[RMDB]
Overview
The data come from the RNA Mapping Database (RMDB), library M2PK90. This 177-nucleotide RNA was probed chemically with 2A3 and DMS. DMS adducts were read by reverse transcription with MarathonRT. Values cover nucleotides 27 to 126.
RNA sequence: GGGAACGACUCGAGUAGAGUCGAAAAGCAACAUAGAUCGUUCUAUUAACGAACACGCGCGGAUCGUCGGUGGUCGGCGAGCCCACGGACGUACUUGAUGGCGCGAACGAGUAAAAAUCGCCGGCAACCUCCAAUAUUUCUUCGGAAAUAUUGGAGGAAAAGAAACAACAACAACAAC
Reactivity to 2A3 in 0.01 (KOAc 150mM, MgCl2 10mM, bicine 150mM(pH8.5), 24C), signal-to-noise 3, nucleotides 027 to 126: g040c020a000a050c010a110u160a070g140a100u070c040g000u050u000c060u070a230u210u190a120a050c060g010a020a010c030a000c060g000c000g020c020g070g090a110u070c000g040u010c080g150g010u010g020g000u020c010g000g000c010g000a050g130c030c000c000a000c000g070g010a000c000g010u040a020c020u090u190g090a130u230g110g000c000g020c020g020a010a020c040g040a020g070u090a010a020a020a010a060u010c000g000c010c040g020g030c010a010a040
Reactivity to DMS in 0.01 (KOAc 150mM, MgCl2 10mM, bicine 150mM(pH8.5), 24C), signal-to-noise 2, nucleotides 027 to 126: g010c060a060a060c070a140u010a070g000a090u000c050g000u000u000c020u000a140u030u010a050a100c150g010a030a090c070a190c040g010c010g010c020g030g000a120u000c010g000u000c030g030g040u000g000g030u000c030g020g000c010g010a030g000c170c010c010a010c020g000g000a040c000g000u000a060c130u030u010g000a150u020g000g000c010g010c020g000a030a030c040g010a100g000u030a040a040a000a030a050u000c010g030c020c020g010g020c160a090a110

Notes: For DMS, 1,949 sequencing reads were counted. The reactions ran in a buffer of 150 mM KOAc, 10 mM MgCl2 and 150 mM bicine (pH 8.5), at 24 C. 2A3 adducts were read by reverse transcription with SuperScript II with manganese.